[RMDB]
Chemical mapping of a 177-nucleotide RNA with 2A3 and DMS. For 2A3, 8,390 sequencing reads were counted. The reactions ran in a buffer of 150 mM KOAc, 10 mM MgCl2 and 150 mM bicine (pH 8.5), at 24 C. Values cover nucleotides 27 to 126.
RNA sequence: GGGAACGACUCGAGUAGAGUCGAAAAGAAAGAAAGAAAGACACGAGGGCAGCGAUGACCCGCCGGGCGAUCUGUGGUCGCCAUGUGCCCGGCGUCGAGCAGUGGCGCGCCCGGGCCGUCAGAUCAAACUUGACAAAGUUUUCGAACUUUGUCAAGUAAAAGAAACAACAACAACAAC
Reactivity to 2A3 in 0.01 (KOAc 150mM, MgCl2 10mM, bicine 150mM(pH8.5), 24C), signal-to-noise 7, nucleotides 027 to 126: g080a020a040a010g110a030a080a010g070a050a110a010g050a010c030a010c110g040a110g000g010g010c030a050g020c030g080a080u070g050a130c000c010c010g020c020c010g010g000g000c010g020a040u050c080u190g100u080g090g020u110c030g010c050c010a030u090g060u100g000c000c030c000g010g000c020g030u110c020g020a040g010c040a030g030u160g110g000c010g000c010g010c030c050c010g010g000g000c010c010g020u040c010a030g010a060u080c040a030a090
Reactivity to DMS in 0.01 (KOAc 150mM, MgCl2 10mM, bicine 150mM(pH8.5), 24C), signal-to-noise 7, nucleotides 027 to 126: g000a090a090a080g000a080a070a070g000a080a060a080g000a040c060a120c070g010a170g000g000g020c030a090g020c070g010a120u010g000a080c240c220c020g020c060c030g010g010g010c020g010a050u010c050u020g020u020g020g020u010c030g000c030c020a010u010g010u030g010c010c010c010g000g000c050g000u020c040g010a060g010c040a120g010u030g010g020c030g000c080g000c050c000c010g000g010g010c080c050g000u010c050a050g000a120u020c080a080a110